[RMDB]
RNA sequence: GGGAACGACUCGAGUAGAGUCGAAAAGGGGUCAUGCCUCCCCACCUCGAGAUAGCUGAGCUUGGAUUUAUGGAGCUGAAGCCUCCACGGCUCCAUUGUCAGCUCCGAAACGAGAGGGCAUGACGGAGGCACCCAAAGCCGGAGUUCGCUCCGGCAACCCGUUAAGUUGGUUCGCCAACUUAACGGGAAAAGAAACAACAACAACAAC
Reactivity to 2A3 in 0.01 (KOAc 150mM, MgCl2 10mM, bicine 150mM(pH8.5), 24C), signal-to-noise 2, nucleotides 027 to 156: g080g000g040g010u110c020a000u070g000c000c010u010c090c010c000c030a010c010c000u000c010g150a180g010a150u130a140g010c100u050g040a020g000c050u160u200g180g030a140u260u170u110a000u110g000g000a010g000c000u020g060a230a000g040c060c060u040c000c050a020c000g010g000c000u040c000c010a010u010u010g030u020c040a000g010c000u040c010c040g080a130a140a020c000g000a000g000a020g010g000g040c040a100u070g000a000c000g000g000a000g010g000c010a030c000c020c010a070a080a000g020c000c000g000g000a000g010u090u270c300g050c130u000c000c000g000g000c000a000a040